Conditions: 150 mM KOAc, 10 mM MgCl2 and 150 mM bicine (pH 8.5), 24 C. An RNA of 207 nucleotides, treated with 2A3 and read out base by base. It was measured as part of the RMDB library M2RFOK.
[RMDB]
RNA sequence: GGGAACGACUCGAGUAGAGUCGAAAACGCAAAGCUGCAGCGCGGCGCUCUGGAGGCAUUGCCCCGCGCACUGCUCUUUACAUGGCCCGACGUGAGGGCACUUCGCGGGCAGUGCUGCGGCCUCGUGAAACUGCCCCUAAGUUCGCUUAGGGGCAAAGUUUCCCUUGAACUUCGGUUCAAGGGAAACAAAAGAAACAACAACAACAAC
Reactivity to 2A3 in 0.01 (KOAc 150mM, MgCl2 10mM, bicine 150mM(pH8.5), 24C), signal-to-noise 2, nucleotides 027 to 156: c040g010c010a060a080a040g000c040u020g010c010a060g030c030g000c030g160g010c050g030c070u030c080u130g100g030a040g030g030c020a080u000u140g070c030c020c020c000g000c010g000c020a000c040u000g010c000u030c010u070u130u130a040c040a180u130g150g000c020c050c060g050a150c090g060u030g030a200g010g000g020c030a040c010u030u090c030g000c000g050g000g000c000a000g010u000g010c000u000g010c000g040g010c020c000u040c000g000u000g000a090a040a020c050u050g000c000c000c000c000u000a000a010g000u050u180c140g040c100u000u000a000g000g000g000g000c000a000a000a000
The 2A3 profile rests on 805 reads. Reactivities are given for positions 27 through 156.